Chemical mapping of a 207-nucleotide RNA with 2A3 and DMS. For 2A3, 1,611 sequencing reads were counted. The reactions ran in a buffer of 150 mM KOAc, 10 mM MgCl2 and 150 mM bicine (pH 8.5), at 24 C. For 2A3 the reverse transcriptase was SuperScript II with manganese.

RNA sequence: GGGAACGACUCGAGUAGAGUCGAAAAUCGGUAGAUGAAGCUUCCCUGACCGGAGGCUGAAAUGGAUCAUCCGCAGCCAAGUCCCUCCUCAGACGCUUUCAAGGUGUCUGGCGGGAUGCUGUUCACAGACUAAAUGAUGGUGGGUCCGCUCAUGGCGCAGGAUUAGUACCUUCGGGUACUAAUCCUGAAAAGAAACAACAACAACAAC
Reactivity to 2A3 in 0.01 (KOAc 150mM, MgCl2 10mM, bicine 150mM(pH8.5), 24C), signal-to-noise 3, nucleotides 027 to 156: u110c020g020g070u060a060g000a100u060g070a070a000g030c020u000u010c010c000c010u010g080a040c020c020g000g020a020g000g000c040u020g070a030a040a090u140g020g020a030u070c010a030u030c020c020g000c000a000g000c020c010a090a030g040u050c010c000c000u010c020c020u070c060a000g000a020c000g020c030u080u200u140c300a170a080g000g010u010g000u010c000u000g030g000c050g000g010g000a010u070g010c010u010g010u080u090c040a060c020a120g160a070c060u150a090a080a080u160g070a030u050g010g020u070g060g000g000u020c010c010g000c010u120c050a070u150g060g020c050g000
Reactivity to DMS in 0.01 (KOAc 150mM, MgCl2 10mM, bicine 150mM(pH8.5), 24C), signal-to-noise 2, nucleotides 027 to 156: u000c070g020g030u010a050g000a070u010g010a120a050g000c020u000u000c000c000c000u010g020a210c150c100g010g000a040g010g050c000u020g020a030a070a100u010g020g000a140u010c040a080u010c010c080g000c020a080g000c040c120a050a230g010u000c000c000c000u000c020c000u000c030a060g000a050c020g010c000u000u020u000c290a170a200g000g030u000g020u000c020u000g000g030c170g000g010g030a080u000g030c010u000g000u000u020c030a070c030a070g000a100c070u000a080a110a090u010g010a080u000g020g020u000g000g010g000u000c030c020g000c060u000c070a120u010g010g020c060g000